[RMDB]
RNA sequence: GGGAACGACUCGAGUAGAGUCGAAAAGAUAUGGACAGGAGCAACAGCUCGGAGGUCGGAAACGACCUUGAGACAUGCUCCGUCCUAAGUCAAAACGCGUUCUAAGUGUUCGCACUUAGAACGCGAAUCAUUUUCGUUACUUCGGUAACGAAAAUGAAAAAGAAACAACAACAACAAC
Reactivity to DMS in 0.01 (KOAc 150mM, MgCl2 10mM, bicine 150mM(pH8.5), 24C), signal-to-noise 2, nucleotides 027 to 126: g020a050u000a300u000g000g000a000c000a080g040g000a000g000c000a020a070c300a140g010c000u020c000g010g020a020g000g010u000c000g000g000a040a040a190c000g010a040c000c010u000u000g010a040g000a080c110a210u000g000c000u000c000c000g000u020c000c000u000a010a050g010u000c030a120a030a140a160c040g000c000g000u000u000c000u000a000a020g010u000g000u010u000c210g020c000a020c000u020u020a020g000a000a000c020g020c010g000a010a020
Reactivity to 2A3 in 0.01 (KOAc 150mM, MgCl2 10mM, bicine 150mM(pH8.5), 24C), signal-to-noise 1, nucleotides 027 to 126: g010a010u060a000u070g030g000a040c190a190g080g020a000g050c010a010a230c090a150g080c010u030c110g040g020a000g000g010u000c010g020g000a000a050a030c000g030a000c010c000u000u020g000a000g000a040c050a040u040g000c010u000c000c020g000u000c000c000u030a050a040g030u010c010a030a020a050a120c030g000c000g000u000u020c010u010a000a000g000u010g030u130u170c300g110c150a000c000u000u010a000g020a010a000c000g000c000g000a000a020

This 177-nucleotide RNA was probed chemically with DMS and 2A3. The reactions ran in a buffer of 150 mM KOAc, 10 mM MgCl2 and 150 mM bicine (pH 8.5), at 24 C. The DMS profile rests on 1,500 reads.